RNA sequence: GGGAACGACUCGAGUAGAGUCGAAAACUGCGCAUUGAGGCACAGACGGCCGUCGAAGAAGUACUGCAUAGCCAUCGACGGUAUCUCCAGUCAGACUUCACUGAUAAAAUUGAUGCUGUGGAUGAUAAGAUAUUUGAAAAGGAAAAUCAAUUAAACGGACAUGACAGCUAUUCGUAGCUGUCAUGUCAAAAGAAACAACAACAACAAC
Reactivity to DMS in 0.01 (KOAc 150mM, MgCl2 10mM, bicine 150mM(pH8.5), 24C), signal-to-noise 1, nucleotides 027 to 156: c060u000g020c000g090c050a230u000u010g040a120g040g000c010a010c010a140g000a100c120g000g020c010c000g010u040c000g000a100a040g000a040a130g010u010a040c000u020g030c050a230u000a050g040c040c010a280u000c010g000a060c040g050g030u000a030u000c050u000c000c010a280g010u000c030a100g000a110c130u000u000c090a190c000u030g000a030u000a070a010a070a170u030u000g010a080u000g040c030u020g070u000g000g000a120u010g010a040u010a040a100g060a140u000a040u000u010u000g000a030a110a090a060g030g020a050a020a090a090u000c090a100a120u010u000a010a090a120c150g020
Reactivity to 2A3 in 0.01 (KOAc 150mM, MgCl2 10mM, bicine 150mM(pH8.5), 24C), signal-to-noise 3, nucleotides 027 to 156: c050u050g000c050g000c060a040u030u150g050a070g030g010c020a010c030a070g060a050c080g040g020c020c010g010u000c030g000a050a010g070a060a000g090u100a120c090u100g010c050a070u170a120g080c030c020a030u010c010g000a000c000g000g000u030a120u030c020u000c010c010a030g030u020c020a050g000a090c020u080u020c050a050c090u040g020a020u060a110a110a080a030u080u080g010a010u020g020c040u000g000u010g110g000a040u080g010a000u060a070a030g040a050u040a210u130u150u180g030a060a100a030a000g050g020a010a100a020a040u030c020a030a000u140u150a190a130a050c110g040